[RMDB]
Conditions: 150 mM KOAc, 10 mM MgCl2 and 150 mM bicine (pH 8.5), 24 C. The record gives the reactivity of an RNA of 177 nucleotides to DMS and 2A3. For 2A3 the reverse transcriptase was SuperScript II with manganese. Values cover nucleotides 27 to 126.
RNA sequence: GGGAACGACUCGAGUAGAGUCGAAAAGGACCUUCUAUGAUCCGACAGAUCAUCCAGGUCCGCACGCGAUUUCCGAGGGUUCUUGUACUGGAAGUCGUGAUCGUGAAUGUGUUAAAGCAUGUCGCGACCACGAUCACGGGUUCGCCCGUGAUCGUGGAAAAGAAACAACAACAACAAC
Reactivity to DMS in 0.01 (KOAc 150mM, MgCl2 10mM, bicine 150mM(pH8.5), 24C), signal-to-noise 2, nucleotides 027 to 126: g000g000a000c000c010u000u000c110u000a060u000g000a000u000c000c140g020a170c300a220g000a010u000c000a000u000c140c100a020g000g030u000c000c010g010c230a110c140g000c020g000a030u000u000u000c070c030g000a130g000g000g020u000u000c120u010u000g050u000a040c090u010g010g020a020a060g000u010c000g000u000g000a090u000c010g010u000g000a120a010u000g020u000g000u000u060a140a190a210g000c000a010u000g010u000c000g020c000g000a050
Reactivity to 2A3 in 0.01 (KOAc 150mM, MgCl2 10mM, bicine 150mM(pH8.5), 24C), signal-to-noise 1, nucleotides 027 to 126: g010g000a000c000c000u040u100c060u060a000u010g010a000u000c050c000g070a030c130a050g000a010u000c010a020u010c030c100a010g000g010u000c010c000g040c000a010c040g010c000g000a010u010u010u030c010c070g200a190g050g070g020u190u050c200u250u280g110u200a040c050u140g000g030a040a000g000u010c000g000u050g030a040u030c000g020u000g010a030a020u040g010u010g040u100u090a160a050a000g070c000a010u060g090u190c000g000c010g010a040